RNA sequence: GGGAACGACUCGAGUAGAGUCGAAAAACAAGCUUGUUGACGCCGCUAAGGCGAGGGACGAAUACGUUUACGAACUGUCCUCCAAGCAAUGCGUUAAGAAAGAAGAUGCAACAGGCACAGUCCUCCAAAGUGUCGUGUUAUUCGUAACACGACACUUAAAAGAAACAACAACAACAAC
Reactivity to DMS in 0.01 (KOAc 150mM, MgCl2 10mM, bicine 150mM(pH8.5), 24C), signal-to-noise 3, nucleotides 027 to 126: a090c070a060a100g010c000u010u010g000u000u000g010a140c020g000c050c130g000c090u010a080a170g040g010c150g010a070g000g020g000a030c030g010a100a150u010a050c070g010u010u010u010a080c050g000a040a090c120u000g000u010c010c010u000c010c060a060a090g010c030a100a090u020g010c020g010u010u020a090a080g000a110a050a100g000a100a100g000a140u030g030c000a010a040c060a030g010g000c020a090c150a110g010u010c040c020u020c130c060a070
Reactivity to 2A3 in 0.01 (KOAc 150mM, MgCl2 10mM, bicine 150mM(pH8.5), 24C), signal-to-noise 2, nucleotides 027 to 126: a000c040a010a040g040c020u050u040g020u050u070g060a040c000g020c020c010g000c080u140a110a020g130g000c050g060a040g000g000g030a000c030g040a110a100u230a110c070g040u060u060u100a070c080g030a080a020c060u080g010u020c000c000u000c040c020a030a000g000c000a000a020u110g010c000g010u100u160a140a080g100a110a120a040g140a080a010g050a060u160g000c010a020a000c020a020g010g000c030a010c040a060g080u000c010c010u020c050c030a110